Chemical mapping of a 177-nucleotide RNA with 2A3 and DMS.
The 2A3 profile rests on 890 reads.
The RNA was probed in 150 mM KOAc, 10 mM MgCl2 and 150 mM bicine (pH 8.5) at 24 C.
For DMS the reverse transcriptase was MarathonRT.
RNA sequence: GGGAACGACUCGAGUAGAGUCGAAAACGCGGCGCCAAGCUGGGUGGUUUUCAUCAAGAUACCGGCGAAGGCGGUUUAAGCAAAUACCAUUUAAUGGAGGGCGGCGAUCUCGUGUGGGAAAUCGGCAUGCACGUGAUAUAUUCGUAUAUCACGUGCAAAAAGAAACAACAACAACAAC
Reactivity to 2A3 in 0.01 (KOAc 150mM, MgCl2 10mM, bicine 150mM(pH8.5), 24C), signal-to-noise 1, nucleotides 027 to 126: c040g020c020g060g000c000g000c000c000a020a030g000c000u050g020g070g080u080g000g050u070u010u030u140c080a090u110c040a050a010g040a080u080a130c020c020g000g000c030g010a140a040g060g020c000g030g000u000u080u030a010a010g040c000a050a050a000u120a060c010c030a040u090u240u220a270a130u050g040g010a020g000g030g080c040g010g010c020g030a020u000c060u030c100g070u100g020u000g040g020g010a050a070a050u010c000g060g000c080a030
Reactivity to DMS in 0.01 (KOAc 150mM, MgCl2 10mM, bicine 150mM(pH8.5), 24C), signal-to-noise 4, nucleotides 027 to 126: c090g030c020g030g000c020g030c030c030a060a300g010c030u000g000g040g030u000g010g030u000u000u010u000c140a110u000c220a050a050g000a120u010a070c030c020g020g010c010g010a110a120g020g000c010g010g010u000u000u000a060a140g040c100a040a040a100u010a140c040c020a060u000u000u010a120a100u010g000g010a080g000g000g000c050g020g000c070g010a090u000c080u010c050g020u000g000u000g010g000g000a030a030a050u000c050g000g000c240a110